An RNA of 207 nucleotides, treated with 2A3 and read out base by base.
2A3 is a SHAPE reagent: it acylates the 2'-hydroxyl of flexible nucleotides of all four kinds.
For 2A3, 723 sequencing reads were counted.
It was measured as part of the RMDB library OK3TST.
[RMDB]
RNA sequence: GGGAACGACUCGAGUAGAGUCGAAAAGCAGGCUCGUCUGCCGUGGGUCAAAACGCUGGAGCAGUUCGACUUUACCUUCCAGCCGGGCAUCGACCGUAAGGUUGUCCGGGAACUGGCUGGUCUGGCGUUCGUGGAGCGCAGCGAAAACGUGAUCCUGGUCAUCCGUCGAGUUCGCUCGACGGAUGACAAAAGAAACAACAACAACAAC
Reactivity to 2A3 in 0.01 (KOAc 150mM, MgCl2 10mM, bicine 150mM(pH8.5), 24C), signal-to-noise 1, nucleotides 027 to 156: g030c080a060g070g010c020u040c070g080u120c100u060g000c060c040g010u040g080g060g030u010c010a050a050a030a000c060g000c000u020g000g000a050g080c000a030g000u070u080c000g070a130c020u080u160u130a080c000c030u000u090c010c010a040g050c010c000g000g000g030c000a020u090c090g150a130c070c000g060u120a120a060g000g050u010u000g000u030c000c020g020g000g000a060a070c000u000g000g010c000u030g030g110u000c000u000g020g000c010g040u030u020c060g030u140g070g090a070g060c000g000c010a030g000c000g120a000a000a180a000c070g110u060g050a050u020c000c010u020g000